Source: RMDB library OK1LIB, as collected in RNAgym. Chemical mapping of a 177-nucleotide RNA with 2A3 and DMS. The DMS profile rests on 3,963 reads. For 2A3, 2,203 sequencing reads were counted.

[RMDB]
RNA sequence: GGGAACGACUCGAGUAGAGUCGAAAAGAAAACAAGUACCGAGAACAUUGUUUUCGCUGCUUGGCGUUGCCGUUUUGUGUUGCAGUUGGUUGGGUAACGCCGCAAAUACCAACGGUACAGAAAGAUAGCACCAUCAUAAUUUCGAUUAUGAUGGUGCAAAAGAAACAACAACAACAAC
Reactivity to 2A3 in 0.01 (KOAc 150mM, MgCl2 10mM, bicine 150mM(pH8.5), 24C), signal-to-noise 4, nucleotides 027 to 126: g010a000a010a000a000c010a010a020g010u000a050c000c090g030a040g060a080a040c080a270u130u200g010u000u020u010u010c000g010c030u000g000c010u070u160g000g000c000g000u000u020g020c000c010g040u010u040u130u130g240u060g080u060u140g040c060a090g010u080u090g100g040u080u110g070g020g000u020a010a010c010g000c010c010g000c000a010a020a000u130a010c000c000a030a030c030g000g020u030a050c000a020g120a000a080a010g110a000u160a020
Reactivity to DMS in 0.01 (KOAc 150mM, MgCl2 10mM, bicine 150mM(pH8.5), 24C), signal-to-noise 3, nucleotides 027 to 126: g010a050a040a090a120c010a030a010g030u010a030c200c000g020a200g000a050a050c080a180u010u030g000u010u000u000u040c010g020c180u010g000c000u030u000g000g000c000g000u000u020g000c000c020g000u000u000u000u010g000u000g000u010u030g010c040a100g000u000u010g000g010u010u020g000g010g000u000a060a060c190g010c020c020g030c120a020a040a070u020a100c050c030a020a040c000g010g000u000a080c080a130g000a060a110a050g000a110u010a080